[RMDB]
RNA sequence: GGGAACGACUCGAGUAGAGUCGAAAACAUCCAGUGUUCGCACUGGAUGAGAGGAAUGUGGAUCGGCAAACUACAUACCAAAAGCUGAGCUCGAAUGAGCAACGAUUUCGUCGUUCGCGACGAAAAAAUCUCAAUUGUGAUUCGUCACAAUUGAGAUAAAAGAAACAACAACAACAAC
Reactivity to DMS in 0.01 (KOAc 150mM, MgCl2 10mM, bicine 150mM(pH8.5), 24C), signal-to-noise 7, nucleotides 027 to 126: c010a010u000c000c000a010g020u000g010u000u020c200g030c020a010c000u010g000g000a010u000g000a080g020a110g000g010a100a030u000g020u010g000g000a080u000c070g010g010c120a080a130a080c040u000a030c030a040u000a110c020c020a090a080a070a100g000c090u000g000a190g010c020u000c010g000a110a080u010g010a020g010c020a080a110c200g000a170u000u000u000c000g000u000c000g020u010u010c210g010c010g000a010c000g000a000a000a020a060a090
Reactivity to 2A3 in 0.01 (KOAc 150mM, MgCl2 10mM, bicine 150mM(pH8.5), 24C), signal-to-noise 9, nucleotides 027 to 126: c000a000u000c000c000a000g000u000g030u050u090c210g030c080a010c000u000g000g010a000u000g000a010g010a010g000g050a090a030u060g010u050g020g030a110u110c100g140g030c120a050a070a060c030u060a010c010a040u070a050c020c000a040a050a020a060g050c090u100g060a010g010c000u020c020g180a300a220u300g000a020g020c020a010a040c040g070a080u010u020u020c010g000u000c000g010u030u050c250g000c000g060a000c000g010a030a000a000a010a000
Chemical mapping of a 177-nucleotide RNA with DMS and 2A3. It was measured as part of the RMDB library M2PK50. For DMS the reverse transcriptase was MarathonRT.